[RMDB]
The record gives the reactivity of an RNA of 177 nucleotides to 2A3 and DMS.
The RNA was probed in 150 mM KOAc, 10 mM MgCl2 and 150 mM bicine (pH 8.5) at 24 C.
Source: RMDB library OK2TST, as collected in RNAgym.
Reactivities are rounded to 0.1 and cut off at 0 and 3.

RNA sequence: GGGAACGACUCGAGUAGAGUCGAAAACGCCUACUACUGAAACAGAAGAGCAGAGGAGAGCCAGAGAGGCGCAGGAGAAGAAAGAUCUGGAGGAGAUCAAUGCACUCCCGAUGGCAACCGGUAAGGUUAGUCUGACCUAAUUCGUUAGGUCAGACUAAAAAGAAACAACAACAACAAC
Reactivity to 2A3 in 0.01 (KOAc 150mM, MgCl2 10mM, bicine 150mM(pH8.5), 24C), signal-to-noise 2, nucleotides 027 to 126: c040g050c000c000u020a080c010u050a000c010u100g080a130a110a020c020a060g080a130a010g030a130g010c030a000g010a000g090g040a030g020a020g000c000c030a030g030a000g000a020g080g030c020g010c050a020g020g050a090g000a120a010g060a060a090a020g000a030u010c010u050g050g030a040g070g020a080g040a020u080c050a050a050u090g000c000a020c020u020c000c000c000g050a060u130g010g000c030a010a030c030c000g000g080u110a090a020g050g040u030
Reactivity to DMS in 0.01 (KOAc 150mM, MgCl2 10mM, bicine 150mM(pH8.5), 24C), signal-to-noise 2, nucleotides 027 to 126: c230g010c030c000u000a090c080u010a090c050u000g020a080a100a080c100a040g010a080a050g010a090g020c050a030g010a080g000g010a080g010a100g020c070c070a080g000a150g010a110g030g010c050g030c060a050g020g010a090g010a070a060g000a070a080a090g020a020u000c050u000g020g000a090g000g000a080g010a070u010c070a050a060u010g000c080a070c050u010c000c000c000g010a100u010g020g000c060a050a070c060c020g000g000u000a060a070g000g010u000